[RMDB]
RNA sequence: GGGAACGACUCGAGUAGAGUCGAAAAGAUAUGGAUGCAUAUAGACAUGCAGGCCUUCGGAAACGAAGGUUCUGCAACAGCUAUGAUGCAUCCUAAGUCAAAACGGUCCAUGUUCGCAUGGACCGAACAGAUCAAGGAUCUUCGGAUCCUUGAUCUGAAAAGAAACAACAACAACAAC
Reactivity to 2A3 in 0.01 (KOAc 150mM, MgCl2 10mM, bicine 150mM(pH8.5), 24C), signal-to-noise 1, nucleotides 027 to 126: g010a010u060a000u080g000g000a000u000g000c000a000u010a010u040a010g070a100c080a110u180g010c000a000g030g010c000c010u000u000c000g000g010a000a000a040c000g010a010a000g040g000u070u060c000u000g020c010a020a030c020a030g020c000u000a000u050g290a020u010g050c000a000u020c000c000u010a000a020g010u010c020a040a010a120a160c000g000g000u000c000c000a030u030g040u060u070c300g030c160a020u000g010g010a030c000c000g000a000a000
Reactivity to DMS in 0.01 (KOAc 150mM, MgCl2 10mM, bicine 150mM(pH8.5), 24C), signal-to-noise 2, nucleotides 027 to 126: g000a030u000a150u020g000g020a010u010g020c000a020u000a020u000a030g000a070c140a180u020g010c000a010g010g000c010c000u000u000c010g000g010a050a050a090c010g000a020a030g000g000u000u020c000u000g020c000a030a040c300a180g030c010u000a010u000g000a020u000g000c020a000u000c000c000u000a000a090g010u000c010a110a060a100a190c030g010g000u000c000c000a010u020g020u000u000c300g010c000a030u010g000g010a000c010c000g000a010a060

Structure probing data (2A3 and DMS) for a 177-nucleotide construct.
The DMS profile rests on 2,519 reads.
2A3 adducts were read by reverse transcription with SuperScript II with manganese.
For 2A3, 3,588 sequencing reads were counted.
The reactions ran in a buffer of 150 mM KOAc, 10 mM MgCl2 and 150 mM bicine (pH 8.5), at 24 C.